[RMDB]
RNA sequence: GGGAACGACUCGAGUAGAGUCGAAAACAGAAACUACAGCUCGUUUGGAGCGAAUUUUGGCUGGUGCAGGGUUGAACGCACAAGCCCAAGCACUUGAUGAAUUUGGAGCGUCUAGCUCAGUGAUGGGCAGAGAUGCCUGUUUCGACAGGCAUCUCUGAAAAGAAACAACAACAACAAC
Reactivity to DMS in 0.01 (KOAc 150mM, MgCl2 10mM, bicine 150mM(pH8.5), 24C), signal-to-noise 3, nucleotides 027 to 126: c030a150g020a130a120a060c120u030a120c100a160g010c000u000c000g020u010u040u060g000g000a070g020c000g000a070a010u000u000u000u000g010g000c110u060g020g000u000g050c020a210g000g000g010u000u000g010a160a110c150g000c100a080c060a110a080g000c010c010c020a070a060g030c040a000c010u000u090g000a080u000g010a040a030u000u050u010g010g020a100g020c050g010u080c110u020a060g030c000u000c000a040g010u010g010a130u010g000g000g020
Reactivity to 2A3 in 0.01 (KOAc 150mM, MgCl2 10mM, bicine 150mM(pH8.5), 24C), signal-to-noise 4, nucleotides 027 to 126: c080a010g250a050a060a000c040u180a060c050a050g000c000u010c000g300u250u280u300g150g010a010g000c000g040a000a030u080u050u040u140g180g020c040u090g000g000u030g000c030a000g020g060g050u120u160g090a200a100c090g010c080a010c070a090a000g000c030c000c000a110a050g000c000a000c010u020u110g060a100u100g060a160a110u080u070u080g130g030a010g000c030g070u120c130u200a020g020c030u000c020a000g000u020g080a070u070g000g000g060

Source information:
The data come from the RNA Mapping Database (RMDB), library OK1LIB. The record gives the reactivity of an RNA of 177 nucleotides to DMS and 2A3. For DMS the reverse transcriptase was MarathonRT. For DMS, 3,325 sequencing reads were counted. For 2A3, 1,339 sequencing reads were counted. The reactions ran in a buffer of 150 mM KOAc, 10 mM MgCl2 and 150 mM bicine (pH 8.5), at 24 C.